This 177-nucleotide RNA was probed chemically with DMS. The RNA was probed in 150 mM KOAc, 10 mM MgCl2 and 150 mM bicine (pH 8.5) at 24 C.
RNA sequence: GGGAACGACUCGAGUAGAGUCGAAAAGAUAUGGACACGCUCGAGAGGUAAGGAGGUCGGAAACGACUCCCCACCCUUACUCCCCACCUCGGCGUGUCCUAAGUCAAAACCGGGGUUCGCCCCGGAAUCAUAUCCAACACUUCGGUGUUGGAUAUGAAAAAGAAACAACAACAACAAC
Reactivity to DMS in 0.01 (KOAc 150mM, MgCl2 10mM, bicine 150mM(pH8.5), 24C), signal-to-noise 2, nucleotides 027 to 126: g010a030u000a300u000g000g000a010c000a010c000g000c000u000c050g040a030g020a090g040g010u020a000a010g020g010a090g040g010u010c010g000g000a050a060a120c010g000a020c000u000c090c000c030c090a300c120c040c030u000u000a080c030u000c040c020c000c070a300c040c010u000c000g000g000c000g030u000g000u000c000c000u000a000a080g000u000c030a120a050a100a080c000c010g010g000g000g000u000u020c210g010c010c010c010c010g000g000a010a010